[RMDB]
RNA sequence: GGGAACGACUCGAGUAGAGUCGAAAAUGGACUAUUUGGGGUUAAAAUCAAAUGGCCUCACAUCCCAAUGCCGACAUUUAGCAUCAGUCCAGCUGGUUGGAAAGUCAAGGACUUACUUAAAGGUAAAAUACCACGAUUGGGAGUAUCGUUCAAUGCCUCAAUAUGCGGCAUUCGUGCCGCAUAUUGAAAAAGAAACAACAACAACAAC
Reactivity to 2A3 in 0.01 (KOAc 150mM, MgCl2 10mM, bicine 150mM(pH8.5), 24C), signal-to-noise 2, nucleotides 027 to 156: u040g010g020a060c030u050a060u090u000u110g010g000g030g000u020u080a130a200a050a070u160c130a020a110a070u130g010g000c000c020u030c010a050c080a110u040c000c000c010a000a020u090g060c040c020g090a080c040a130u090u130u130a020g010c010a060u050c050a030g020u020c040c020a000g000c070u040g020g020u180u050g110g040a200a100a000g030u090c090a050a110g000g000a000c010u030u050a010c020u010u250a260a080a040g000g000u020a060a000a090a110u100a090c050c040a020c040g090a060u020u030g010g010g000a000g020u040a020u050c030g000u000u010c040a070a070u160g030c000c010
Reactivity to DMS in 0.01 (KOAc 150mM, MgCl2 10mM, bicine 150mM(pH8.5), 24C), signal-to-noise 2, nucleotides 027 to 156: u000g010g060a020c030u000a070u010u000u000g020g010g020g010u000u010a060a070a130a180u000c120a070a090a100u010g010g000c020c020u000c010a090c130a090u010c000c010c010a210a090u000g040c040c060g000a090c150a190u000u000u000a060g010c000a100u000c080a110g010u010c020c020a110g000c050u000g020g000u000u000g010g010a080a100a160g080u000c130a120a140g050g010a080c060u000u010a080c040u000u010a040a140a180g000g000u000a020a080a050a140u000a070c050c010a100c080g010a150u000u010g020g020g020a140g010u000a060u000c040g000u000u000c000a050a070u000g010c100c090
This 207-nucleotide RNA was probed chemically with 2A3 and DMS. The reactions ran in a buffer of 150 mM KOAc, 10 mM MgCl2 and 150 mM bicine (pH 8.5), at 24 C. For DMS the reverse transcriptase was MarathonRT. The 2A3 profile rests on 785 reads. DMS (dimethyl sulfate) methylates the pairing face of unpaired adenines and cytosines. For 2A3 the reverse transcriptase was SuperScript II with manganese. The DMS profile rests on 2,167 reads.